[RMDB]
Conditions: 150 mM KOAc, 10 mM MgCl2 and 150 mM bicine (pH 8.5), 24 C. The record gives the reactivity of an RNA of 177 nucleotides to DMS. Source: RMDB library TTRINS, as collected in RNAgym.

RNA sequence: GGGAACGACUCGAGUAGAGUCGAAAAGAUAUGGAGGUACACGUUCUCACGUGUGUAGGGAGUUGUUGUCGGAAACGACAAUACAACGAAGAACUAUAUACACGUGAGAACGUGUACCUCCUAAGUCCAUUCGUGCUAGGUUCGCCUAGCACGAAUGAAAAGAAACAACAACAACAAC
Reactivity to DMS in 0.01 (KOAc 150mM, MgCl2 10mM, bicine 150mM(pH8.5), 24C), signal-to-noise 1, nucleotides 027 to 126: g000a190u010a300u000g010g030a000g010g000u000a010c000a020c010g020u000u000c010u000c000a010c000g010u010g020u000g000u000a020g010g010g010a090g000u000u040g050u020u010g020u030c010g000g040a170a130a280c010g000a040c000a040a130u030a050c020a020a020c020g010a100a140g020a070a240c040u000a070u000a070u000a070c000a000c000g000u000g000a000g010a010a010c000g010u020g000u000a010c000c010u000c010c010u000a010a070g000u000c020